[RMDB]
RNA sequence: GGGAACGACUCGAGUAGAGUCGAAAAUUGGAAGCUGGACGGGAAUCACAGCGUUGGCUUUGAUCGCUGGAAUGACUAUGACACUCAUGCAUUUCGCCUUGAUCUUACCUGGACUUAAAGCCAAGGCCAAACGACAGGUGUUCGCACCUGUCGUUUGAAAAGAAACAACAACAACAAC
Reactivity to 2A3 in 0.01 (KOAc 150mM, MgCl2 10mM, bicine 150mM(pH8.5), 24C), signal-to-noise 2, nucleotides 027 to 126: u100u040g030g010a060a030g020c010u010g000g000a020c020g050g000g050a020a060u070c020a050c040a090g060c050g040u070u060g020g020c000u010u030u120g040a040u040c040g000c040u020g000g040a050a040u080g030a050c050u110a050u070g020a050c040a010c170u090c030a030u060g030c000a030u050u080u060c030g000c010c000u030u100g040a050u020c000u000u090a100c000c020u020g060g070a110c030u090u170a060a020a010g050c020c010a000a010g000g000c000
Reactivity to DMS in 0.01 (KOAc 150mM, MgCl2 10mM, bicine 150mM(pH8.5), 24C), signal-to-noise 3, nucleotides 027 to 126: u010u000g030g010a130a100g010c080u000g020g000a090c100g010g000g010a080a090u000c080a050c120a070g030c020g030u000u010g020g010c030u000u000u000g020a050u000c070g000c020u010g030g000a060a060u000g010a090c080u000a070u000g020a140c140a110c160u000c050a080u000g000c030a080u000u020u000c100g000c030c140u000u000g010a070u000c040u010u020a090c090c070u010g000g010a100c110u010u000a040a050a060g000c100c000a000a040g010g000c090

Record summary: The record gives the reactivity of an RNA of 177 nucleotides to 2A3 and DMS. Reactivities are given for positions 27 through 126. It was measured as part of the RMDB library OK2TRN.